RNA sequence: GGGAACGACUCGAGUAGAGUCGAAAAUAAUUCUACGAAACAUGGCUAUCUAUUAGGUUUGAUGCCUGGAGCAUACGACAUUGCCACUCUCUUAGCUCGUGGGACCGAAUCAGUGUCCGCUUGGUUGAACGCAAACUCUAUUCGUAGAGUUUGCGUUAAAAGAAACAACAACAACAAC
Reactivity to 2A3 in 0.01 (KOAc 150mM, MgCl2 10mM, bicine 150mM(pH8.5), 24C), signal-to-noise 1, nucleotides 027 to 126: u110a010a040u120u020c030u050a110c080g000a020a050a040c040a030u110g020g090c000u110a010u020c050u030a090u120u160a210g130g260u120u080u140g020a040u090g010c000c000u020g100g020a050g000c030a030u080a110c030g030a030c110a050u000u070g060c000c000a010c020u040c000u000c010u060u120a020g020c010u020c080g020u050g000g080g050a040c000c000g050a090a050u120c080a040g000u040g020u190c000c020g010c060u040u010g100g060u040u110g110
Reactivity to DMS in 0.01 (KOAc 150mM, MgCl2 10mM, bicine 150mM(pH8.5), 24C), signal-to-noise 3, nucleotides 027 to 126: u020a110a100u020u010c010u010a080c040g010a150a050a130c130a050u000g000g000c010u010a030u000c050u000a120u000u000a090g000g010u010u000u000g010a060u010g010c010c010u010g000g040a050g020c090a060u000a070c100g000a030c070a040u000u000g020c050c030a100c080u000c070u000c000u010u010a080g010c040u000c080g040u000g020g020g000a060c030c040g000a100a100u020c120a050g010u010g020u000c020c020g000c050u000u000g010g000u000u010g000